[RMDB]
RNA sequence: GGGAACGACUCGAGUAGAGUCGAAAAAGUGGUGCAUUUGAACGUGGUAUGGAUGUUACUUUGCAACGUACUAAUAAAAAGCAAAAGAUCACACGUUCAACGUCAUUUAUGGCAGACGAUAAAGAAACUGACGAGAAAUUUUCGAAUUUCUCGUCAGAAAAGAAACAACAACAACAAC
Reactivity to DMS in 0.01 (KOAc 150mM, MgCl2 10mM, bicine 150mM(pH8.5), 24C), signal-to-noise 3, nucleotides 027 to 126: a030g000u000g000g000u000g050c180a140u030u000u030g020a000a010c010g000u000g000g020u030a090u010g010g010a070u030g000u070u070a120c090u000u010u020g000c070a060a090c250g000u050a050c300u050a110a120u050a050a050a070a100a100g000c040a030a030a070a060g000a010u000c030a200c010a010c010g020u000u000c000a000a060c140g000u000c020a020u030u010u010a060u030g000g000c020a060g000a040c040g000a120u030a030a090a080g000a080a040a120
Reactivity to 2A3 in 0.01 (KOAc 150mM, MgCl2 10mM, bicine 150mM(pH8.5), 24C), signal-to-noise 4, nucleotides 027 to 126: a000g110u080g040g010u110g030c170a130u030u000u030g000a010a000c020g020u010g040g060u210a130u150g210g050a030u040g060u120u060a120c050u030u030u050g020c040a080a030c120g240u120a030c130u020a030a280u180a140a170a030a020a000g030c030a000a040a000a020g090a020u090c000a000c000a000c060g000u000u010c000a000a000c020g010u030c000a000u000u160u150a080u060g050g020c020a040g020a100c040g020a080u100a120a120a030g080a050a110a060